[RMDB]
The record gives the reactivity of an RNA of 177 nucleotides to 2A3 and DMS.
RNA sequence: GGGAACGACUCGAGUAGAGUCGAAAAACGCACGUGUACGCACGUGCGAAUUUGGGGGAACAUUCAACCUGUCGGUGAGUUUGGGCAGCUCAGACAAACCAUCGACCGUUGAGUGGACCCCGAGGAAAGCACGUUGUAUUUUCGAAUACAACGUGCUAAAAGAAACAACAACAACAAC
Reactivity to 2A3 in 0.01 (KOAc 150mM, MgCl2 10mM, bicine 150mM(pH8.5), 24C), signal-to-noise 3, nucleotides 027 to 126: a000c010g000c000a000c000g010u020g030u040a020c250g030c090a000c000g000u010g000c010g000a000a020u070u040u050g030g000g000g000g010a140a040c000a000u000u000c000a000a000c030c060u040g000u000c000g000g010u010g010a290g030u010u010u010g120g090g050c060a120g030c100u080c140a050g060a080c000a010a010a000c000c000a000u010c000g000a000c000c010g010u000u000g020a010g000u010g000g010a000c000c000c010c000g000a000g010g150a130a170
Reactivity to DMS in 0.01 (KOAc 150mM, MgCl2 10mM, bicine 150mM(pH8.5), 24C), signal-to-noise 4, nucleotides 027 to 126: a170c020g000c010a000c000g040u000g000u020a090c230g020c040a000c000g010u010g000c000g000a000a010u000u010u010g000g050g020g000g000a090a230c010a020u000u000c000a000a020c020c120u040g000u000c010g020g000u000g000a120g050u000u000u010g020g000g060c080a100g020c110u050c120a110g000a140c010a010a000a030c010c010a000u000c010g000a000c000c300g010u030u010g010a030g020u000g000g000a290c000c000c000c000g010a020g000g000a120a110